[RMDB]
RNA sequence: GGGAACGACUCGAGUAGAGUCGAAAAGCGUACUACGAAUCGCUAACGAGCCAACAGCUAUAUGGAGGCUUCUCCCAAAUAGGAGAAGUGAAGUAUAGACAUGGCUCGGACCCGAUUCGUAUCGCAAAACCUGCGAUGCGUUCGCGCAUCGCAGGAACUAUUAUUGGUAGUUCGCUACCAAUAAUAGAAAAGAAACAACAACAACAAC
Reactivity to DMS in 0.01 (KOAc 150mM, MgCl2 10mM, bicine 150mM(pH8.5), 24C), signal-to-noise 1, nucleotides 027 to 156: g010c030g050u010a080c110u000a030c020g020a060a040u000c000g020c040u010a120a300c000g020a000g000c000c000a070a110c100a180g000c000u000a000u010a000u010g020g010a300g000g010c000u000u000c000u000c000c000c010a060a240a160u020a050g030g010a040g010a020a030g020u000g000a190a300g010u000a020u000a010g010a030c020a300u000g010g010c010u000c010g010g000a070c300c190c000g000a020u000u000c000g020u000a000u000c000g010c010a120a030a110a090c050c000u000g020c000g020a010u020g000c030g060u000u000c300g050c000g000c010a020u000c000g060c000a010g000g000a000a020
Reactivity to 2A3 in 0.01 (KOAc 150mM, MgCl2 10mM, bicine 150mM(pH8.5), 24C), signal-to-noise 4, nucleotides 027 to 156: g020c010g030u100a090c040u010a000c060g000a000a000u000c000g000c030u060a090a030c000g000a000g000c000c000a080a040c080a200g030c000u010a020u000a010u030g030g010a060g300g070c000u000u000c000u000c010c010c020a220a300a150u300a090g010g010a010g000a010a000g040u080g170a020a010g010u010a000u000a000g070a130c030a080u050g000g000c010u000c000g000g010a000c000c000c000g010a000u000u010c000g000u010a030u050c000g000c000a020a050a000a100c000c000u010g000c000g000a000u000g010c010g040u060u060c290g010c000g000c130a000u000c000g000c000a000g000g000a000a000